[RMDB]
RNA sequence: GGGAACGACUCGAGUAGAGUCGAAAAGCCCAACUACCCUACAGACCGCGAUAACCUCGGGAAACUGAGGCCAAUAGCGGAUAUCACUCUCAUGCUGGAGUGCAGAGAGUGAGAAACGUUCCGGCGCUCCUAAUGAUUCGUUCGCGAAUCAUUAGGAAAAAGAAACAACAACAACAAC
Reactivity to DMS in 0.01 (KOAc 150mM, MgCl2 10mM, bicine 150mM(pH8.5), 24C), signal-to-noise 5, nucleotides 027 to 126: g010c000c010c030a120a160c180u020a150c050c010c030u030a090c180a160g000a150c010c010g020c010g000a050u010a250a300c020c010u030c000g000g000g010a070a070a200c000u000g000a020g000g030c010c030a110a090u020a070g000c000g010g010a090u000a060u000c010a010c000u000c000u010c000a100u000g030c020u010g030g020a150g000u020g000c020a010g020a020g010a030g020u000g000a010g010a050a060a150c040g000u000u000c020c030g020g050c060g000c090
Reactivity to 2A3 in 0.01 (KOAc 150mM, MgCl2 10mM, bicine 150mM(pH8.5), 24C), signal-to-noise 6, nucleotides 027 to 126: g010c000c000c000a010a010c040u130a030c010c020c020u060a040c050a090g110a120c000c010g020c020g010a020u030a070a020c000c000u010c000g000g000g000a010a020a000c000u020g000a000g000g020c000c010a060a030u060a020g000c000g000g000a000u030a010u000c000a000c000u000c000u000c030a290u040g000c040u100g110g250a200g080u090g010c000a000g000a000g000a000g000u000g000a000g000a000a070a000c040g030u060u020c020c010g070g010c040g040c030
Structure probing data (DMS and 2A3) for a 177-nucleotide construct. Reactivities are rounded to 0.1 and cut off at 0 and 3. The data come from the RNA Mapping Database (RMDB), libraries RFM100 and RFMREP. Conditions: 150 mM KOAc, 10 mM MgCl2 and 150 mM bicine (pH 8.5), 24 C.